[RMDB]
RNA sequence: GGGAACGACUCGAGUAGAGUCGAAAAUCCUAAGUCCACCAGGUAGGUGGGUGCAUGUUGCUUGGAUUUACAUCGGAAACGAUGUUGUCAGCAACAUGCCCACCUAUAAUCUGGUGGAUAUGGAAAACCGCGAGAGACCUUCGGGUCUCUCGCGGAAUCUGUUAUCAAGUUUCGACUUGAUAACAGAAAAAGAAACAACAACAACAAC
Reactivity to 2A3 in 0.01 (KOAc 150mM, MgCl2 10mM, bicine 150mM(pH8.5), 24C), signal-to-noise 1, nucleotides 027 to 156: u030c010c010u020a010a050g030u000c010c000a010c000c000a020g000g010u000a000g030g010u030g000g030g070u120g160c000a000u000g030u000u000g000c020u080u150g160g010a050u300u290u100a020c000a000u000c030g030g050a070a060a010c000g010a010u000g000u000u010g000u000c000a030g010c030a000a000c000a020u000g000c000c000c000a000c000c000u020a000u010a020a140u110c000u000g000g000u000g000g000a000u000a010u010g010g000a010a090a020a110c010c000g000c000g000a000g000a040g000a010c000c000u130u120c300g070g000g000u010c010u000c010u010c000g060c050g010g000a000a040
Conditions: 150 mM KOAc, 10 mM MgCl2 and 150 mM bicine (pH 8.5), 24 C. Chemical mapping of a 207-nucleotide RNA with 2A3. Values are in units of 0.01, from 0 to 300, in steps of 10. It was measured as part of the RMDB library RNAMAK.